[RMDB]
RNA sequence: GGGAACGACUCGAGUAGAGUCGAAAAUUGGUCCGCUUCGCCCCGUACUUUAUGUCACCCUUUAUAUGGCACCCGAGGGCCGAGAACUGGGCCCGUAUCUGGUGAUGCCGUCCGGUAUGGAGACGCAUGUACGAAACUGUUUCGACAGUUUCGUACAAAAAGAAACAACAACAACAAC
Reactivity to 2A3 in 0.01 (KOAc 150mM, MgCl2 10mM, bicine 150mM(pH8.5), 24C), signal-to-noise 1, nucleotides 027 to 126: u020u050g000g000u000c000c020g030c010u070u070c010g010c000c030c000c020g000u000a050c020u090u050u070a050u180g060u050c000a080c000c000c000u020u170u000a240u070a040u180g010g000c010a010c000c010c010g030a110g000g050g020c000c000g140a110g050a120a050c130u110g030g060g080c000c000c000g010u040a090u000c040u080g100g000u140g080a130u030g010c050c000g050u040c070c010g020g000u130a090u110g020g030a030g010a020c020g000c050a030
Reactivity to DMS in 0.01 (KOAc 150mM, MgCl2 10mM, bicine 150mM(pH8.5), 24C), signal-to-noise 2, nucleotides 027 to 126: u010u000g010g010u000c010c020g010c060u010u000c070g010c060c010c020c060g010u000a040c050u000u000u010a080u020g010u000c030a050c020c020c090u020u000u010a090u010a040u010g010g020c030a040c020c000c000g000a180g000g000g040c010c010g010a140g020a090a110c150u010g020g000g040c030c010c020g000u000a070u010c100u000g030g020u010g000a080u000g000c020c030g020u000c070c080g010g000u010a060u000g000g010a120g000a080c070g020c160a080